[RMDB]
This 177-nucleotide RNA was probed chemically with 2A3 and DMS. 2A3 adducts were read by reverse transcription with SuperScript II with manganese. The reactions ran in a buffer of 150 mM KOAc, 10 mM MgCl2 and 150 mM bicine (pH 8.5), at 24 C.
RNA sequence: GGGAACGACUCGAGUAGAGUCGAAAAGUAAUACUUUUUUGUCAGUUAGUAAACCUUGUGGUCCUUCAGCAGAAUAUUUAAAAGUUUUACCUGCAAUUGAAAUAGCAUCAAUAUAUGCUUUAACUACCAAUACGCAGCUGUUCGCAGCUGCGUAUUGAAAAGAAACAACAACAACAAC
Reactivity to 2A3 in 0.01 (KOAc 150mM, MgCl2 10mM, bicine 150mM(pH8.5), 24C), signal-to-noise 3, nucleotides 027 to 126: g030u030a040a110u110a140c050u160u110u100u010u070u190g080u070c040a040g010u060u140a020g030u060a080a070a050c000c020u090u120g130u170g050g030u010c010c000u000u100c030a030g020c000a010g110a180a040u090a150u080u200u300a060a140a040a010g010u000u030u080u020a020c000c000u030g050c060a100a050u070u080g120a090a070a030u210a040g000c000a000u030c020a240a020u120a070u060a000u250g050c000u030u130u050a040a090c060u060a050c040
Reactivity to DMS in 0.01 (KOAc 150mM, MgCl2 10mM, bicine 150mM(pH8.5), 24C), signal-to-noise 1, nucleotides 027 to 126: g010u070a050a120u020a300c030u000u000u000u000u020u000g010u020c020a010g000u000u060a070g000u000a030a110a090c130c000u010u010g020u060g000g000u000c060c010u000u050c090a090g020c040a000g000a090a060u000a070u040u010u060a010a000a090a060g010u000u000u000u020a080c090c000u000g000c020a090a140u000u040g050a090a150a090u000a010g020c020a040u020c170a080a080u040a040u030a110u020g000c000u030u010u020a070a100c030u060a100c110